[RMDB]
RNA sequence: GGGAACGACUCGAGUAGAGUCGAAAAAGCACAGACUGAGGGGCUAGACUACCUGGAUUUGAACUCCAGCUUUGACUCUAUUAGCUGUUGUCAAGGGCUCAGCUGAGCUGGGAGAGAGAUGAGCUGUUAGGUGUUGGAGUAGCCAAUUAAAACAAGCCUGAGAAUAUGCUUUCGAGCAUAUUCUCAGAAAAGAAACAACAACAACAAC
Reactivity to DMS in 0.01 (KOAc 150mM, MgCl2 10mM, bicine 150mM(pH8.5), 24C), signal-to-noise 1, nucleotides 027 to 156: a050g000c030a060c110a070g010a070c010u010g020a060g000g010g000g040c010u000a050g000a070c060u000a050c040c010u000g020g000a070u010u010u020g000a090a130c030u000c050c000a070g020c030u000u010u020g040a140c010u020c020u000a090u000u010a090g010c030u000g030u000u010g020u000c040a090a190g000g000g010c030u000c020a130g000c070u000g020a060g020c040u030g000g030g000a090g020a110g000a260g010a070u010g000a050g000c000u000g010u000u010a100g030g010u010g000u000u000g000g000a070g020u000a060g020c020c020a050a180u000u010a030a030a050a080c050a030a060g020c140
Reactivity to 2A3 in 0.01 (KOAc 150mM, MgCl2 10mM, bicine 150mM(pH8.5), 24C), signal-to-noise 2, nucleotides 027 to 156: a000g060c020a030c030a040g020a060c060u080g030a030g030g020g010g020c020u010a010g020a040c050u090a130c070c010u010g020g000a020u050u000u060g020a030a010c010u000c030c000a010g010c050u060u090u120g030a080c000u000c010u080a140u080u120a050g000c020u030g040u230u040g050u080c040a080a110g060g050g000c010u000c020a000g000c020u110g020a020g030c030u060g020g100g000a040g000a000g000a010g020a030u050g050a000g000c010u000g030u070u070a060g000g050u070g040u070u070g030g010a020g020u020a010g000c000c000a030a000u150u080a040a110a030a050c040a020a000g070c000